[RMDB]
RNA sequence: GGGAACGACUCGAGUAGAGUCGAAAAGGAGAGUUCCGCUCCUUCAGGUGAACGAUCUCGGUUGUUUCUCUGAAGGCAUGAUCACCCCGUCCGAUGCGGAAGUUCGUGCUUCCGUCGAACGCGAAAGUAAAACCCUAAAGCUUCGGCUUUAGGGUAAGUUGAAACAAGAGUUCGCUCUUGUUUCAACAAAAGAAACAACAACAACAAC
Reactivity to DMS in 0.01 (KOAc 150mM, MgCl2 10mM, bicine 150mM(pH8.5), 24C), signal-to-noise 2, nucleotides 027 to 156: g000g000a070g010a150g010u000u010c030c080g010c070u000c020c040u000u000c020a030g020g010u000g000a030a010c020g000a040u000c020u000c150g090g050u000u000g000u010u010u000c010u000c020u010g000a080a020g000g030c060a050u000g000a100u010c040a180c030c010c020c000g000u010c000c010g010a080u010g030c010g020g030a020a160g030u000u010c210g050u030g030c010u000u000c000c000g000u000c000g010a050a050c050g020c070g010a080a060a150g000u000a070a060a090a140c000c000c000u010a000a020a050g010c030u000u000c300g050g020c010u000u000u010a000g020g010g010u010a000a000
Reactivity to 2A3 in 0.01 (KOAc 150mM, MgCl2 10mM, bicine 150mM(pH8.5), 24C), signal-to-noise 2, nucleotides 027 to 156: g080g000a060g010a030g030u110u030c030c010g010c020u030c010c020u000u030c020a050g060g020u130g040a030a000c010g000a050u010c030u050c150g110g000u010u020g030u030u060u070c030u000c000u000g010a000a000g010g010c050a120u070g010a030u070c040a070c000c000c000c000g000u030c010c010g030a020u180g050c020g040g020a000a000g000u080u290c160g070u300g130c000u020u010c010c010g010u020c040g040a070a000c010g030c020g070a060a050a020g100u160a040a020a080a050c000c000c000u010a020a000a000g000c010u020u090c230g080g000c000u000u070u000a000g020g000g000u000a000a030
An RNA of 207 nucleotides, treated with DMS and 2A3 and read out base by base.
The reactions ran in a buffer of 150 mM KOAc, 10 mM MgCl2 and 150 mM bicine (pH 8.5), at 24 C.
Values cover nucleotides 27 to 156.
DMS adducts were read by reverse transcription with MarathonRT.
It was measured as part of the RMDB library M2RFPK.
For DMS, 4,181 sequencing reads were counted.